[RMDB]
RNA sequence: GGGAACGACUCGAGUAGAGUCGAAAAAAAGUUACGUCGAUCUCUUAAACCAAGCAUGGGCAGAUUUGCCAUUACGUUUAAAAUUAUAUUCAAUUUGGCGUGUGUACAAAGUCAAGAAGUACUACAAUCCCUUUCUAUGGUUCGCCAUAGAAAGGGAAAAAGAAACAACAACAACAAC
Reactivity to DMS in 0.01 (KOAc 150mM, MgCl2 10mM, bicine 150mM(pH8.5), 24C), signal-to-noise 3, nucleotides 027 to 126: a030a030a040g010u010u050a020c060g020u000c030g000a020u010c040u000c040u000u010a030a060a070c100c060a070a070g010c210a040u030g000g020g010c100a010g040a110u000u020u010g000c280c030a010u020u010a040c120g030u010u030u010a010a030a000a010u020u050a090u020a070u010u030c180a000a110u000u000u000g000g020c030g040u010g000u000g030u000a030c070a010a000a080g000u000c090a120a130g000a060a070g010u000a040c020u030a050c220a160a070
Reactivity to 2A3 in 0.01 (KOAc 150mM, MgCl2 10mM, bicine 150mM(pH8.5), 24C), signal-to-noise 3, nucleotides 027 to 126: a000a040a000g140u110u060a000c040g040u000c010g030a060u030c030u030c010u050u100a060a000a020c040c020a130a100g130c030a190u140g030g010g000c000a010g070a300u090u130u200g020c060c000a030u030u080a020c020g000u040u040u050a040a100a000a000u120u070a070u040a080u200u140c040a080a060u060u030u090g020g000c000g000u020g000u000g000u010a020c010a010a130a000g060u050c040a100a000g070a090a010g060u030a050c040u000a010c010a060a090
The record gives the reactivity of an RNA of 177 nucleotides to DMS and 2A3. Source: RMDB library OK1LIB, as collected in RNAgym. For 2A3, 1,834 sequencing reads were counted.